[RMDB]
RNA sequence: GGGAACGACUCGAGUAGAGUCGAAAACGGCAGCACGAUUAUGCAUACACGUGGGUUGUCCCAAUCCGUGCUGCAGCUAUGAUGACGCGGAUGUACAUUCGCACGAACGAUGUGAGGAGUUAAUCCAACAGUCAUACGUGUUCGCACGUAUGACUGUAAAAGAAACAACAACAACAAC
Reactivity to 2A3 in 0.01 (KOAc 150mM, MgCl2 10mM, bicine 150mM(pH8.5), 24C), signal-to-noise 3, nucleotides 027 to 126: c020g070g000c000a000g080c050a000c050g010a020u000u140a050u300g070c060a060u230a280c080a040c280g090u300g030g000g020u100u130g070u140c010c000c010a000a000u010c030c020g020u000g030c000u000g000c010a000g020c010u010a010u290g080a110u080g000a060c090g000c040g100g000a010u000g070u120a040c050a170u000u010c020g000c060a010c050g100a110a010c060g090a090u110g030u020g060a050g040g000a050g020u130u140a020a030u040c000c000a000
Reactivity to DMS in 0.01 (KOAc 150mM, MgCl2 10mM, bicine 150mM(pH8.5), 24C), signal-to-noise 3, nucleotides 027 to 126: c120g000g010c020a010g000c010a000c020g020a090u040u000a080u020g010c100a140u040a090c170a110c190g060u010g000g000g020u000u010g000u000c000c020c000a100a010u000c050c010g010u030g010c020u000g010c010a030g000c070u020a070u010g000a090u020g010a110c100g020c050g010g000a000u010g000u040a070c100a100u000u000c000g000c000a110c020g010a100a070c080g020a070u020g030u010g000a080g000g000a080g030u000u000a080a130u000c020c010a160